This 177-nucleotide RNA was probed chemically with 2A3 and DMS.
Conditions: 150 mM KOAc, 10 mM MgCl2 and 150 mM bicine (pH 8.5), 24 C.
The data come from the RNA Mapping Database (RMDB), libraries RFM100 and RFMREP.
Reactivities are rounded to 0.1 and cut off at 0 and 3.
For DMS the reverse transcriptase was MarathonRT.
RNA sequence: GGGAACGACUCGAGUAGAGUCGAAAAAACUGCGUUAGGCGUCCAGACGCAGGUAGCCCGAAUUUUAUAGCUGAUGAGCGUAGCGCGUUGCAGGGUGGCGGCCAAAAGGUCGUGAAAGCUACAGCACUACAAGAUAGACUUUCGAGUCUAUCUUGUAAAAAGAAACAACAACAACAAC
Reactivity to 2A3 in 0.01 (KOAc 150mM, MgCl2 10mM, bicine 150mM(pH8.5), 24C), signal-to-noise 7, nucleotides 027 to 126: a000a000c010u010g000c010g010u020u010a090g100g000c010g020u010c020c010a010g000a010c000g000c000a010g020g040u040a020g030c000c020c000g020a020a020u110u120u100u110a250u140a070g030c040u040g050a080u050g070a100g020c040g020u050a000g010c030g010c030g080u060u090g030c030a020g010g030g060u060g050g000c010g000g000c000c000a050a270a080a070g010g010u020c010g010u050g080a120a030a010g000c010u030a040c010a020g010c030a030c020
Reactivity to DMS in 0.01 (KOAc 150mM, MgCl2 10mM, bicine 150mM(pH8.5), 24C), signal-to-noise 9, nucleotides 027 to 126: a060a040c010u000g000c000g010u000u000a070g010g000c040g010u010c020c020a160g000a010c000g020c000a000g000g010u010a080g010c010c000c000g020a090a090u030u030u030u020a090u020a110g020c050u010g000a090u010g010a090g010c050g000u000a050g000c040g010c080g020u000u010g010c060a070g000g010g010u010g010g010c020g000g000c010c030a080a050a090a100g010g020u000c020g010u000g010a050a070a100g010c050u010a040c050a070g010c080a110c170